An RNA of 177 nucleotides, treated with 2A3 and DMS and read out base by base. Source: RMDB library OK2TRN, as collected in RNAgym. Conditions: 150 mM KOAc, 10 mM MgCl2 and 150 mM bicine (pH 8.5), 24 C. Reactivities are given for positions 27 through 126.
[RMDB]
RNA sequence: GGGAACGACUCGAGUAGAGUCGAAAAACCGUUGGUCAUCCUUACUUUGAAAUUCGUGACAAUGUAGAUCAAUCUAAGGUGUUGGUCCCUAAAGUUUCAGGCAAUCAGUUUAGAGUCUUUAGAUGCAGUAAUCACUACGGUUCGCCGUAGUGAUUACAAAAGAAACAACAACAACAAC
Reactivity to 2A3 in 0.01 (KOAc 150mM, MgCl2 10mM, bicine 150mM(pH8.5), 24C), signal-to-noise 1, nucleotides 027 to 126: a000c020c010g040u040u120g030g020u070c020a060u070c010c000u010u040a050c010u010u020u010g030a010a060a070u110u000c020g050u000g030a080c090a180a090u150g020u130a050g010a060u040c010a010a000u030c050u080a010a080g050g010u060g000u160u070g070g000u050c000c000c020u090a110a120a050g010u000u100u000c020a000g000g000c010a050a110u040c040a180g020u060u050u230a060g050a040g060u000c010u040u110u160a120g010a080u130g020c030a000
Reactivity to DMS in 0.01 (KOAc 150mM, MgCl2 10mM, bicine 150mM(pH8.5), 24C), signal-to-noise 3, nucleotides 027 to 126: a080c030c020g040u010u020g010g000u000c090a060u010c030c010u000u020a030c040u000u000u000g010a040a060a200u000u020c040g030u010g030a100c300a070a060u010g020u000a050g000a170u000c010a020a020u000c070u010a030a060g010g000u000g000u000u000g020g000u000c020c020c010u000a020a060a060g020u000u000u000c030a070g000g000c020a080a080u010c110a070g020u000u000u000a070g030a120g000u000c030u000u000u000a070g000a110u000g000c140a100